[RMDB]
RNA sequence: GGGAACGACUCGAGUAGAGUCGAAAAAGGCAGAAUUGAUGGCAGAUUGUCAGAUCUCUUCGGUAUAUCUGGCGCUUUCUGGUAAGCACAUCAGCUGCCAGAAUGAAAUUGGUAUGGUGCCUAUUUCCUCCUGCUACUGCUUCGGCAGUAGCAGGAGAAAAGAAACAACAACAACAAC
Reactivity to 2A3 in 0.01 (KOAc 150mM, MgCl2 10mM, bicine 150mM(pH8.5), 24C), signal-to-noise 1, nucleotides 027 to 126: a000g030g000c010a020g030a140a150u160u050g030a000u090g010g150c020a010g120a140u090u140g030u010c010a000g030a030u000c070u000c070u200u180c060g070g080u130a120u000a000u100c010u010g020g000c040g030c060u040u050u000c000u010g010g000u080a160a100g050c060a030c030a220u120c090a010g000c000u000g040c030c000a000g000a000a030u030g030a000a000a000u070u130g000g060u120a110u220g150g110u110g000c030c000u000a020u020u020u020c010
Reactivity to DMS in 0.01 (KOAc 150mM, MgCl2 10mM, bicine 150mM(pH8.5), 24C), signal-to-noise 1, nucleotides 027 to 126: a050g000g000c000a020g030a050a100u000u000g010a010u010g010g010c040a020g000a140u010u010g020u000c010a040g000a020u000c140u000c030u000u000c120g030g020u000a060u020a010u000c020u000g020g000c110g020c210u000u000u000c020u000g000g010u010a050a020g070c100a210c220a060u000c140a050g000c010u000g000c000c000a000g000a060a060u000g000a040a030a140u050u030g000g030u000a040u000g000g000u000g030c000c020u020a080u020u000u000c020